Source: RMDB library OK3TST, as collected in RNAgym. An RNA of 207 nucleotides, treated with 2A3 and DMS and read out base by base.
RNA sequence: GGGAACGACUCGAGUAGAGUCGAAAACUCGCGCUUCACACCGAGAUGGGUACGCUCCAUGUAGGCGCCGGCCACGGGCUGUAGCUGAUACACGGCAGAGGCAUCCUUGAUCAGGUCCCAAUGCUGCUUGGUCAGCUCCAGCUCACCAGCGACGGUCACGAAAAGGAUAUUUCGAUAUCCUUUUCGUAAAAGAAACAACAACAACAAC
Reactivity to 2A3 in 0.01 (KOAc 150mM, MgCl2 10mM, bicine 150mM(pH8.5), 24C), signal-to-noise 6, nucleotides 027 to 156: c020u030c030g020c010g000c050u110u110c080a090c030a040c070c050g060a060g030a200u090g030g030g050u130a070c090g010c040u030c030c020a030u090g070u080a090g040g000c000g010c020c030g040g000c040c010a100c130g000g000g000c000u000g010u000a000g000c000u000g000a000u060a060c010a000c010g010g000c000a010g000a030g020g000c040a160u260c010c010u110u130g060a140u240c110a010g020g010u030c020c000c000a000a020u040g010c000u020g010c070u160u240g010g000u010c000a000g010c000u010c000c000a000g000c000u000c000a010c000c030a020g050c020g070a060c070g060g000u100c090
Reactivity to DMS in 0.01 (KOAc 150mM, MgCl2 10mM, bicine 150mM(pH8.5), 24C), signal-to-noise 2, nucleotides 027 to 156: c030u000c050g010c060g040c020u010u020c120a180c060a060c040c030g050a110g070a060u000g000g000g070u000a060c070g020c030u020c030c060a130u030g040u000a130g000g000c020g010c020c010g000g010c040c030a120c130g000g000g080c010u000g010u000a040g010c020u010g000a070u000a140c050a030c050g030g020c010a070g000a300g010g010c080a030u010c010c020u000u000g020a200u010c200a120g050g010u000c120c000c010a000a300u000g000c010u010g010c030u000u010g030g000u000c010a040g000c000u020c040c030a070g010c000u000c010a040c040c020a150g050c010g010a060c030g030g010u000c060
Record summary: DMS adducts were read by reverse transcription with MarathonRT. 2A3 adducts were read by reverse transcription with SuperScript II with manganese. The reactions ran in a buffer of 150 mM KOAc, 10 mM MgCl2 and 150 mM bicine (pH 8.5), at 24 C.